The record gives the reactivity of an RNA of 207 nucleotides to 2A3.

RNA sequence: GGGAACGACUCGAGUAGAGUCGAAAACCACACGUCCUCGUCGUACAGAGUGGUAACAUGUGUCACCACAUAUCCAAGCUUGGGUACACGGGCUUGACCCAACCCCUUGGGCGGAUGGUGGCACAUGAAAAGAAGUAACACUUCGGUGUUACUUCAAGCCCUUAACGCUGUUCGCAGCGUUAAGGGCAAAAGAAACAACAACAACAAC
Reactivity to 2A3 in 0.01 (KOAc 150mM, MgCl2 10mM, bicine 150mM(pH8.5), 24C), signal-to-noise 1, nucleotides 027 to 156: c000c000a010c000a000c080g160u040c030c030u110c060g160u140c020g040u160a050c040a070g090a010g000u030g040g080u200a150a040c000a000u000g020u000g000u030c000a010c010c010a130c100a100u300a050u190c000c000a000a000g000c040u030u040g010g000g000u010a030c040a010c060g020g030g000c020u220u300g140a300c010c000c010a000a000c010c010c020c000u000u000g000g000g000c000g020g000a040u040g000g000u000g000g000c000a000c000a000u000g000a000a000a000a000g000a000a000g030u000a000a000c000a000c010u030u050c140g080g000u010g000u010u000a000c000u000u000c000a000a000